[RMDB]
RNA sequence: GGGAACGACUCGAGUAGAGUCGAAAACGUCCACGUAGACAACAUACGAGUAAACCAAGUCAUCAAAAACCAGUGCAAAAAGCCGAAGAUUUUGAAAAGAAAUUAAGCAAUUUCUUAAAAGAUAGUGCAGUGUUACAGAGUUCGCUCUGUAACACUGAAAAGAAACAACAACAACAAC
Reactivity to 2A3 in 0.01 (KOAc 150mM, MgCl2 10mM, bicine 150mM(pH8.5), 24C), signal-to-noise 4, nucleotides 027 to 126: c090g110u020c010c010a040c020g050u030a030g030a100c020a100a000c020a170u170a050c030g020a040g110u170a070a060a030c020c020a100a020g060u060c010a090u020c030a180a050a030a020a080c000c040a010g000u040g060c040a010a030a150a050a060g020c020c020g060a090a040g030a050u040u050u090u190g040a120a070a020a020g040a020a030a000u060u060a090a040g080c040a040a020u050u010u000c000u060u090a060a090a050a070g100a040u110a070g110u070g020
Reactivity to DMS in 0.01 (KOAc 150mM, MgCl2 10mM, bicine 150mM(pH8.5), 24C), signal-to-noise 2, nucleotides 027 to 126: c120g020u000c000c000a070c110g010u040a090g000a110c130a110a190c050a050u000a010c050g020a060g000u000a050a060a160c060c010a000a130g000u000c150a110u020c050a010a010a070a190a030c070c050a040g000u020g000c040a130a050a110a140a130g010c060c000g000a140a030g000a070u010u000u000u000g010a120a040a050a010g000a000a000a000u000u000a140a190g000c170a050a070u020u000u000c000u000u000a090a200a030a070g000a020u020a070g010u010g070